[RMDB]
RNA sequence: GGGAACGACUCGAGUAGAGUCGAAAAUGCUCGUUUGUUCUGGAUGGUUAGCUGCUUUACUUAUUGGAUGGUUUACACACAGAACGAUUAAAGCAAUUAGCAACAACCACACGAAUGUUAUAAAAAGCACACGCAGAUACUUCGGUAUCUGCGUGUGAAAAGAAACAACAACAACAAC
Reactivity to DMS in 0.01 (KOAc 150mM, MgCl2 10mM, bicine 150mM(pH8.5), 24C), signal-to-noise 1, nucleotides 027 to 126: u000g000c050u020c020g000u000u000u010g010u010u000c000u010g010g000a110u000g000g000u010u000a100g000c000u000g000c060u000u000u000a020c080u020u000a120u010u010g010g010a070u000g010g030u020u020u020a110c200a080c290a090c020a030g010a020a090c020g010a050u000u000a030a000a000g000c010a050a090u010u010a060g000c080a000a050c040a030a070c000c010a050c190a070c090g000a030a030u010g070u000u000a100u000a070a160a040a080a120g000
Reactivity to 2A3 in 0.01 (KOAc 150mM, MgCl2 10mM, bicine 150mM(pH8.5), 24C), signal-to-noise 1, nucleotides 027 to 126: u030g030c000u000c040g120u090u060u070g010u020u000c010u040g120g080a200u020g050g110u030u010a040g000c030u010g020c020u160u100u070a080c060u080u090a110u000u100g030g110a090u010g000g070u000u090u050a080c130a010c040a000c000a010g020a070a040c060g020a030u090u070a040a000a000g000c000a040a120u060u040a060g030c030a000a060c020a030a040c050c010a010c030a000c000g080a100a060u100g120u240u130a220u060a150a170a030a000a010g060